The record gives the reactivity of an RNA of 207 nucleotides to DMS and 2A3. Values cover nucleotides 27 to 156. The 2A3 profile rests on 2,409 reads. For DMS the reverse transcriptase was MarathonRT. For 2A3 the reverse transcriptase was SuperScript II with manganese. The reactions ran in a buffer of 150 mM KOAc, 10 mM MgCl2 and 150 mM bicine (pH 8.5), at 24 C. It was measured as part of the RMDB library RNAMAK. In probing experiments dimethyl sulfate is read out at A N1 and C N3, which are open when not base-paired. The DMS profile rests on 3,263 reads.

[RMDB]
RNA sequence: GGGAACGACUCGAGUAGAGUCGAAAACCGUAGGGAUCCAAUACGCUUGGAUUUAUGGACUGAGUAUACUUCGAAAGAGGUAUACGAGAUGAGUCCAUUGUCAGCGUGAUGGAUCCCUAAACGGAAAGAUUAAACUGACUUCGGUCAGUUUAAUCAAGAAAUCGGAUAAGUUCGCUUAUCCGAUUUCAAAAGAAACAACAACAACAAC
Reactivity to DMS in 0.01 (KOAc 150mM, MgCl2 10mM, bicine 150mM(pH8.5), 24C), signal-to-noise 2, nucleotides 027 to 156: c000c010g030u000a040g030g000g000a020u000c000c000a020a260u000a010c000g020c030u000u010g040g040a030u000u000u000a010u000g010g030a050c000u020g010a300g020u000a010u000a000c000u020u000c000g000a140a210a300g010a050g020g030u000a000u020a010c000g000a170g000a170u000g020a060g020u000c000c010a010u000u000g010u000c000a050g000c010g060u000g020a150u000g000g000a020u000c000c010c000u000a000a000a040c030g020g020a110a120a210g000a030u000u000a000a030a030c010u000g000a040c000u010u000c300g030g040u000c000a000g010u000u000u000a000a000u000c000a100a110
Reactivity to 2A3 in 0.01 (KOAc 150mM, MgCl2 10mM, bicine 150mM(pH8.5), 24C), signal-to-noise 3, nucleotides 027 to 156: c010c000g010u020a010g010g010g000a000u010c000c000a040a050u090a080c020g010c040u090u230g150g020a050u240u260u140a020u010g010g000a000c000u020g010a010g020u000a000u010a000c010u000u020c010g100a110a090a070g000a010g000g000u010a010u000a010c000g000a010g010a060u300g130a010g000u000c000c000a000u010u010g010u010c010a000g010c010g000u000g010a000u030g000g000a000u040c000c000c000u000a000a000a000c010g020g040a080a110a110g010a000u000u000a000a000a000c000u000g000a000c010u030u100c300g020g000u000c000a000g000u000u000u000a000a000u000c010a000a000